Notes: Structure probing data (DMS and 2A3) for a 207-nucleotide construct. The reactions ran in a buffer of 150 mM KOAc, 10 mM MgCl2 and 150 mM bicine (pH 8.5), at 24 C.

[RMDB]
RNA sequence: GGGAACGACUCGAGUAGAGUCGAAAAUUGAUAAUUUGUUGUGUACCUUCAUUUAAAUGAAUUGAAACAAAUUUAAUACAAGUGGAUGUAGGAUAACCGUCCGUCCUUUACAUUGGUAUAAAAGUGAACGACACAGACCUCUUCGGAGGUCUGUGAACUUCUUCCAUAUGUUCGCAUAUGGAAGAAGAAAAGAAACAACAACAACAAC
Reactivity to DMS in 0.01 (KOAc 150mM, MgCl2 10mM, bicine 150mM(pH8.5), 24C), signal-to-noise 1, nucleotides 027 to 156: u000u010g010a180u000a070a080u000u000u000g020u000u000g000u000g030u000a110c030c060u000u010c010a010u000u010u010a060a060a100u010g000a030a090u000u000g010a250a140a140c010a060a070a070u000u010u000a040a100u000a030c040a000a110g040u000g020g010a100u010g020u000a040g010g010a030u010a040a210c090c090g000u000c050c030g000u000c000c010u020u010u000a010c020a110u010u000g000g040u000a020u000a020a030a010a080g010u000g020a040a040c070g020a300c000a040c000a020g000a030c000c010u000c030u000u030c300g020g010a020g000g020u000c000u000g010u010g000a030a040
Reactivity to 2A3 in 0.01 (KOAc 150mM, MgCl2 10mM, bicine 150mM(pH8.5), 24C), signal-to-noise 2, nucleotides 027 to 156: u110u030g040a030u070a230a120u100u000u060g010u000u000g010u000g030u110a080c010c000u050u060c050a090u070u170u210a160a160a080u100g030a010a040u050u060g020a070a080a000c030a010a140a060u060u160u220a070a030u210a100c020a100a000g020u060g090g020a070u080g020u170a010g020g020a020u010a160a080c040c040g040u010c010c020g010u040c010c000u080u110u010a050c060a080u020u090g110g000u080a060u030a090a070a020a020g040u100g030a050a030c060g110a020c030a000c000a010g000a020c010c020u070c010u080u090c200g080g000a020g020g000u000c000u010g000u000g000a000a000